The record gives the reactivity of an RNA of 177 nucleotides to 2A3 and DMS. The DMS profile rests on 3,864 reads. The RNA was probed in 150 mM KOAc, 10 mM MgCl2 and 150 mM bicine (pH 8.5) at 24 C. Values cover nucleotides 27 to 126. Source: RMDB library OK2TRN, as collected in RNAgym.

[RMDB]
RNA sequence: GGGAACGACUCGAGUAGAGUCGAAAACUUGUCGCCAUUGUGUUCGUAGACCAGCGCCUGAUUGGCCCAGCUUUCGGCCACAUUCUGGUCGAGCGUGAUCGCCGUGUUGAAAUCGUCGAAAGCGUUAAUUACUCCGGGUAUUCGUACCCGGAGUAAUAAAAGAAACAACAACAACAAC
Reactivity to 2A3 in 0.01 (KOAc 150mM, MgCl2 10mM, bicine 150mM(pH8.5), 24C), signal-to-noise 2, nucleotides 027 to 126: c000u030u110g040u070c020g000c000c000a070u020u180g050u020g030u050u060c070g060u100a050g000a110c020c000a020g010c020g020c010c030u130g060a160u050u110g050g000c000c010c030a060g030c020u010u050u070c020g000g000c000c010a010c020a070u150u050c020u030g000g020u020c020g010a010g010c020g000u030g030a040u030c010g040c020c010g000u010g060u140u050g040a080a100a030u030c010g000u010c030g000a010a010a000g030c000g020u080u150a020
Reactivity to DMS in 0.01 (KOAc 150mM, MgCl2 10mM, bicine 150mM(pH8.5), 24C), signal-to-noise 4, nucleotides 027 to 126: c050u000u000g010u000c040g020c010c060a090u000u000g020u010g030u010u000c080g010u010a110g000a070c050c020a080g000c180g010c080c040u000g010a100u000u000g000g010c000c030c070a110g010c080u000u010u010c040g020g020c020c030a050c200a120u010u010c050u010g020g020u010c010g000a070g010c070g010u000g010a180u000c040g000c030c020g020u000g020u020u020g000a080a130a120u010c100g010u000c030g000a030a050a190g010c020g020u010u000a070